[RMDB]
RNA sequence: GGGAACGACUCGAGUAGAGUCGAAAAUUCGAGCUGCUCAGCAAGAGUUUGGCGCCCUCGAUUCAUGGACAUGCCUAUGUGAAGCAGGCCAUUCUUUGCCUGCUGCUCGGCGGCGUUGAGAAGAUCCAUAUCAUAACCCGUUCGCGGGUUAUGAUAUAAAAGAAACAACAACAACAAC
Reactivity to 2A3 in 0.01 (KOAc 150mM, MgCl2 10mM, bicine 150mM(pH8.5), 24C), signal-to-noise 1, nucleotides 027 to 126: u130u020c020g000a010g000c000u110g020c070u100c100a040g020c000a160a090g020a010g030u030u080u130g100g000c060g030c010c050c000u030c070g060a090u110u010c000a070u060g000g130a030c030a030u060g070c040c000u050a050u060g000u030g050a040a000g010c000a000g020g000c030c020a090u180u090c130u200u040u060g020c010c000u000g000c000u000g020c000u000c010g000g050c010g010g020c010g000u000u040g030a050g000a100a030g020a040u020c060c030
Reactivity to DMS in 0.01 (KOAc 150mM, MgCl2 10mM, bicine 150mM(pH8.5), 24C), signal-to-noise 5, nucleotides 027 to 126: u000u000c010g010a300g000c020u000g000c140u010c170a080g020c070a060a240g000a050g010u000u000u000g010g000c100g010c020c040c010u000c110g000a060u000u000c060a060u010g010g000a040c080a060u000g010c020c000u000a300u020g010u010g000a050a010g010c000a010g000g000c010c300a100u000u000c180u010u010u010g010c000c000u000g010c000u000g000c020u000c010g000g010c110g010g010c000g010u000u000g010a080g010a100a160g000a070u000c030c190
An RNA of 177 nucleotides, treated with 2A3 and DMS and read out base by base.
The DMS profile rests on 4,205 reads.
The RNA was probed in 150 mM KOAc, 10 mM MgCl2 and 150 mM bicine (pH 8.5) at 24 C.